[RMDB]
RNA sequence: GGGAACGACUCGAGUAGAGUCGAAAAGAAAGGCGUGAUAAUAAAGUAAAUGGUGAAAGAAAGGUUGACAGGAAGUUUUGCUGUAUGAUGAUUCGAAUGAGUAAUGAGAUAUUGAUAAGCAAAUGAAUAGUCAAAGUAUAUAUAGCUAUUCUCGUUCCACUAGUCUCCGGUUCGCCGGAGACUAGUGAAAAGAAACAACAACAACAAC
Reactivity to DMS in 0.01 (KOAc 150mM, MgCl2 10mM, bicine 150mM(pH8.5), 24C), signal-to-noise 1, nucleotides 027 to 156: g000a040a080a030g020g020c020g040u000g110a120u000a100a190u020a040a070a150g020u000a100a060a050u000g000g020u020g000a020a080a090g010a100a070a020g070g050u010u000g020a090c000a030g010g020a190a140g000u000u000u000u000g030c010u000g040u000a120u000g020a100u000g050a190u000u010c060g020a110a050u000g000a160g010u000a080a050u030g000a130g020a070u000a090u000u000g020a080u010a070a080g000c040a010a100a150u000g000a020a020u010a020g010u010c020a080a010a190g000u000a180u010a020u000a120u000a100g020c000u000a000u000u000c020u000c060g000u000u000c010
Reactivity to 2A3 in 0.01 (KOAc 150mM, MgCl2 10mM, bicine 150mM(pH8.5), 24C), signal-to-noise 2, nucleotides 027 to 156: g020a030a050a000g020g010c010g050u040g100a090u080a240a010u110a070a060a010g100u060a080a110a090u120g050g000u040g050a040a060a070g050a050a050a030g040g000u060u030g010a030c020a000g000g030a040a020g000u010u010u060u130g050c010u040g000u090a060u090g090a030u050g000a030u040u040c030g010a020a050u060g000a030g100u120a010a070u070g020a040g000a040u050a010u040u070g020a030u020a140a000g000c000a050a050a000u080g010a000a010u020a000g000u060c050a000a070a070g080u030a090u000a000u010a010u040a250g000c000u010a000u050u040c020u030c030g080u060u070c000